Chemical mapping of a 177-nucleotide RNA with 2A3 and DMS. For DMS the reverse transcriptase was MarathonRT. For 2A3 the reverse transcriptase was SuperScript II with manganese.
[RMDB]
RNA sequence: GGGAACGACUCGAGUAGAGUCGAAAACUCUCAUCUCACAGAGGUGUUAUCGCUGACAAUCAAGCAAAAUGGGCUGUCCCGACAACACGGACAGAUGACAAGUUGCGAAUGGAGACAUGCUUCCAGCAGACUCUGUAGGAUUCGUCCUACAGAGUCUAAAAGAAACAACAACAACAAC
Reactivity to 2A3 in 0.01 (KOAc 150mM, MgCl2 10mM, bicine 150mM(pH8.5), 24C), signal-to-noise 5, nucleotides 027 to 126: c000u000c010u010c020a070u030c030u000c020a210c070a120g070a000g000g020u040g000u080u120a160u110c120g000c040u030g010a070c020a080a150u170c060a130a030g050c020a060a080a010a100u060g050g000g020c020u000g020u030c050c040c000g070a060c060a190a020c030a030c070g000g000a000c010a030g040a080u120g020a040c050a080a050g040u020u050g030c010g070a020a060u110g010g040a060g020a040c030a070u130g050c010u060u020c020c000a040g000c030
Reactivity to DMS in 0.01 (KOAc 150mM, MgCl2 10mM, bicine 150mM(pH8.5), 24C), signal-to-noise 5, nucleotides 027 to 126: c060u000c060u010c020a090u010c020u010c130a100c200a090g020a160g010g000u000g000u020u010a080u010c080g000c090u000g000a080c090a110a030u020c060a070a080g020c120a080a020a110a040u040g020g000g000c020u000g010u000c000c250c030g030a100c220a060a050c110a110c210g000g030a070c070a020g010a020u000g000a130c110a070a130g000u000u000g000c010g010a120a090u000g010g010a120g000a110c120a050u010g000c050u000u000c010c010a060g000c280